[RMDB]
RNA sequence: GGGAACGACUCGAGUAGAGUCGAAAAAGAGACUAUGUGGUGACAUAUCGACCCGGGAAGAUUACAAAGAAAUCUGAAGCAGCACCUGUAUACUUGACAAUCUAUGGGGACGGAAUAAGGACCAACCCCCUCACCCCAUUUUCGAAUGGGGUGAGGGAAAAGAAACAACAACAACAAC
Reactivity to 2A3 in 0.01 (KOAc 150mM, MgCl2 10mM, bicine 150mM(pH8.5), 24C), signal-to-noise 2, nucleotides 027 to 126: a000g030a000g000a010c080u060a040u140g110u070g050g030u130g080a000c000a030u240a030u090c090g090a150c000c000c000g010g000g000a180a000g010a080u010u010a200c150a070a200a000g090a030a030a040u050c060u020g040a040a010g000c020a000g000c090a030c010c000u010g030u020a010u040a050c100u080u090g170a030c070a080a070u050c050u080a050u130g000g070g000g000a000c020g100g000a000a040u140a120a060g030g030a030c020c020a000a050c000c000
Reactivity to DMS in 0.01 (KOAc 150mM, MgCl2 10mM, bicine 150mM(pH8.5), 24C), signal-to-noise 1, nucleotides 027 to 126: a120g010a050g010a060c090u000a080u000g000u090g010g000u000g010a190c160a050u000a100u050c040g000a090c000c000c000g070g010g000a110a030g000a010u010u000a110c230a110a080a020g000a080a070a000u000c020u000g000a100a070g000c100a160g000c000a070c020c090u060g020u000a000u000a030c010u000u010g070a080c060a100a140u000c000u000a080u000g010g010g000g000a110c160g020g000a030a000u020a010a210g000g000a030c050c010a060a210c180c000
Structure probing data (2A3 and DMS) for a 177-nucleotide construct. Conditions: 150 mM KOAc, 10 mM MgCl2 and 150 mM bicine (pH 8.5), 24 C. DMS adducts were read by reverse transcription with MarathonRT. 2A3 is a SHAPE reagent: it acylates the 2'-hydroxyl of flexible nucleotides of all four kinds.